[RMDB]
RNA sequence: GGGAACGACUCGAGUAGAGUCGAAAACUGGUGAGAGCUCAGAAGAAGAGGAGAGGUGAAGGGAAAGCCUCAUUCUCCUUAGAGAUUACCUAAGUGGUGUUGGCAGUGAUGAUUAUUUUGAUGAAGUCUCAGAGGGAAAUGAGGAACAAGGUAUUGACCUAAAUAUAGCUUUCGAGCUAUAUUUAGGAAAAGAAACAACAACAACAAC
Reactivity to 2A3 in 0.01 (KOAc 150mM, MgCl2 10mM, bicine 150mM(pH8.5), 24C), signal-to-noise 9, nucleotides 027 to 156: c030u030g040g000u060g040a080g010a010g010c020u030c140a060g030a120a010g020a050a010g030a060g020g030a030g000a010g040g030u060g050a050a080g040g010g000a040a080a020g040c000c000u010c000a020u020u010c030u020c050c000u010u040a020g000a000g000a040u040u110a080c030c030u070a150a050g030u040g100g010u040g030u100u100g050g000c040a030g030u030g060a060u020g020a020u050u110a070u050u250u100u080g070a090u070g050a060a020g010u000c010u010c060a080g020a040g030g020g000a000a020a020u020g000a010g000g010a010a020c030a020a010g050g020u090a070u110u150g050a040
Reactivity to DMS in 0.01 (KOAc 150mM, MgCl2 10mM, bicine 150mM(pH8.5), 24C), signal-to-noise 3, nucleotides 027 to 156: c050u020g000g000u010g000a100g020a080g020c020u000c050a100g000a080a090g010a120a060g020a110g030g000a080g000a050g010g030u010g000a070a100g010g010g000a080a080a280g000c010c000u010c010a040u000u000c020u000c000c000u010u000a180g020a090g010a080u000u000a070c060c030u000a070a140g030u000g010g010u000g020u010u000g000g000c050a070g020u000g010a050u000g020a080u000u000a140u030u000u010u000g010a130u010g010a100a090g020u000c020u000c030a300g000a030g010g020g000a020a020a040u000g000a040g020g020a040a050c070a030a060g000g010u000a100u000u000g010a270
Annotation
Conditions: 150 mM KOAc, 10 mM MgCl2 and 150 mM bicine (pH 8.5), 24 C. Chemical mapping of a 207-nucleotide RNA with 2A3 and DMS. High 2A3 reactivity points to a flexible backbone, as in loops and unpaired stretches. The data come from the RNA Mapping Database (RMDB), library OK3TST.